This 177-nucleotide RNA was probed chemically with DMS and 2A3.
The data come from the RNA Mapping Database (RMDB), library OK2TST.
Conditions: 150 mM KOAc, 10 mM MgCl2 and 150 mM bicine (pH 8.5), 24 C.
The DMS profile rests on 1,658 reads.
RNA sequence: GGGAACGACUCGAGUAGAGUCGAAAAGACGGAACCCGCUUCCGCUUGCUUGGCAUUGGCGUCAGCGAUCUUUCGCCAAGCGACCGGGCCGAUCCACCUGACCUCGUUGAUAUUCAGGCCACCAAGACCAGGAUUAGUCAUUCGUGACUAAUCCUGGAAAAGAAACAACAACAACAAC
Reactivity to DMS in 0.01 (KOAc 150mM, MgCl2 10mM, bicine 150mM(pH8.5), 24C), signal-to-noise 2, nucleotides 027 to 126: g000a110c010g020g000a050a100c070c060c090g010c170u020u000c020c030g010c230u000u010g020c020u000u000g000g010c010a070u000u000g020g000c050g000u000c200a170g020c080g010a070u020c040u000u000u000c080g020c000c010a020a020g000c030g010a040c080c030g030g010g020c170c020g000a090u000c010c020a080c070c010u000g000a050c080c000u010c060g010u020u000g000a090u000a130u010u010c060a060g010g000c020c010a090c070c080a060a150g000a240
Reactivity to 2A3 in 0.01 (KOAc 150mM, MgCl2 10mM, bicine 150mM(pH8.5), 24C), signal-to-noise 1, nucleotides 027 to 126: g040a000c030g000g020a040a140c030c060c050g000c160u130u070c020c020g000c010u010u050g000c000u000u010g020g000c000a010u030u040g020g020c020g070u130c110a080g090c050g170a230u000c000u020u110u060c070g000c000c010a030a020g010c020g020a000c030c000g000g010g000c020c000g000a060u040c000c010a040c010c010u050g020a070c010c010u030c070g080u040u160g030a030u030a030u160u060c050a050g050g000c000c000a040c020c020a040a010g050a060